[RMDB]
RNA sequence: GGGAACGACUCGAGUAGAGUCGAAAAAUAGGGGGGCAACUAAAGGAAGCUCUAUUAGAUACAGGAGCAGAUGAUACAGUAUUAGAAGAAAUGAGUUUGCCAGGAAGAUGGAAACCAAAAAUGAUAGAUGAUAACAUCCCUUCGGGGAUGUUAUCAUAAAAGAAACAACAACAACAAC
Reactivity to DMS in 0.01 (KOAc 150mM, MgCl2 10mM, bicine 150mM(pH8.5), 24C), signal-to-noise 3, nucleotides 027 to 126: a070u050a090g000g030g000g020g020g010c050a050a080c110u020a010a110a130g000g020a140a100g000c000u000c000u020a130u030u010a100g000a220u020a050c170a120g000g000a030g000c000a040g000a110u050g000a110u040a080c080a020g000u000a050u020u020a080g000a070a080g000a040a060a050u020g000a130g030u010u040u050g010c040c020a060g060g010a050a050g000a100u010g000g000a060a040a110c010c080a050a060a030a090a040u000g000a060u020a080g010
Reactivity to 2A3 in 0.01 (KOAc 150mM, MgCl2 10mM, bicine 150mM(pH8.5), 24C), signal-to-noise 1, nucleotides 027 to 126: a020u160a050g000g080g000g000g010g000c000a000a000c070u250a000a000a110g000g000a040a050g000c000u000c000u000a200u140u060a000g150a300u300a030c020a000g140g000a000g000c070a000g000a020u160g070a080u080a110c100a000g220u150a230u250u000a030g130a110a000g060a000a120a290u070g000a030g000u000u000u150g000c000c010a030g160g080a020a090g170a030u210g030g180a200a000a000c020c020a040a040a040a040a040u070g070a000u000a020g300